[RMDB]
RNA sequence: GGGAACGACUCGAGUAGAGUCGAAAAUGGUUACGUUAUUACCGAACCGCAGAGUCGCCUCACGAUCGAAUACUGGCUCAACGUCCUGUUGAUACAUGUUUUGCUCGUCGUCAAACAUCACGUUACACGUCGUGUACAUACUCUUUUCGCUUGCGAAGAUGCUGCCACGGUUCGCCGUGGCAGCAUCAAAAGAAACAACAACAACAAC
Reactivity to 2A3 in 0.01 (KOAc 150mM, MgCl2 10mM, bicine 150mM(pH8.5), 24C), signal-to-noise 1, nucleotides 027 to 156: u170g000g060u000u010a090c000g010u100u070a220u110u090a160c130c000g010a010a000c000c030g030c040a000g000a020g000u010c070g000c000c010u050c030a030c020g050a050u110c080g050a070a040u110a170c000u000g020g020c030u070c060a000a010c050g070u130c070c060u090g000u000u050g030a090u040a050c040a060u160g050u000u040u000u040g020c010u020c070g060u010c030g000u010c070a040a100a010c050a050u110c030a020c060g120u130u230a070c100a000c090g160u110c020g020u080g080u030a000c030a030u110a050c030u070c010u110u000u010u100c010g020c090u050u070g000c030g080a020a060
Structure probing data (2A3) for a 207-nucleotide construct. For 2A3, 503 sequencing reads were counted. 2A3 is a SHAPE reagent: it acylates the 2'-hydroxyl of flexible nucleotides of all four kinds. The data come from the RNA Mapping Database (RMDB), library OK3TST.